[RMDB]
Chemical mapping of a 177-nucleotide RNA with DMS and 2A3. For DMS the reverse transcriptase was MarathonRT. 2A3 adducts were read by reverse transcription with SuperScript II with manganese. Values are in units of 0.01, from 0 to 300, in steps of 10. The RNA was probed in 150 mM KOAc, 10 mM MgCl2 and 150 mM bicine (pH 8.5) at 24 C. In probing experiments dimethyl sulfate is read out at A N1 and C N3, which are open when not base-paired.
RNA sequence: GGGAACGACUCGAGUAGAGUCGAAAACCCCCCUUCCUCCCUCCAAGUGGCAUUGUAAAACUCACAGUGACAAAGAGACAGAGUAGGGUUCUAGGCCCCUGUUCCUGGGGACUUGAAGGCGGUUUUACACCAUUGGAGUAUUCGUACUCCAAUGGUGAAAAGAAACAACAACAACAAC
Reactivity to DMS in 0.01 (KOAc 150mM, MgCl2 10mM, bicine 150mM(pH8.5), 24C), signal-to-noise 4, nucleotides 027 to 126: c000c010c010c000c010c000u010u000c090c030u010c010c060c030u000c030c050a080a110g020u000g010g000c030a050u010u000g010u000a050a050a100a090c200u010c100a060c020a050g000u000g010a060c050a040a070a100g000a080g030a090c120a060g010a060g010u010a060g010g000g010u020u010c060u010a080g000g000c030c000c000c010u010g010u010u000c050c040u010g000g000g030g000a030c100u000u000g020a030a080g000g020c170g010g010u010u000u000u010a140
Reactivity to 2A3 in 0.01 (KOAc 150mM, MgCl2 10mM, bicine 150mM(pH8.5), 24C), signal-to-noise 5, nucleotides 027 to 126: c000c010c000c000c000c000u000u040c020c030u000c040c000c000u010c010c010a160a050g060u010g040g020c010a010u000u030g030u110a060a100a110a130c050u100c060a020c010a020g020u010g050a020c010a020a070a020g030a010g000a010c030a070g050a020g040u100a060g020g020g000u010u030c010u050a030g020g020c000c010c010c020u090g080u220u120c040c050u030g000g000g000g030a030c000u010u070g030a020a010g070g040c090g030g040u000u000u020u130a020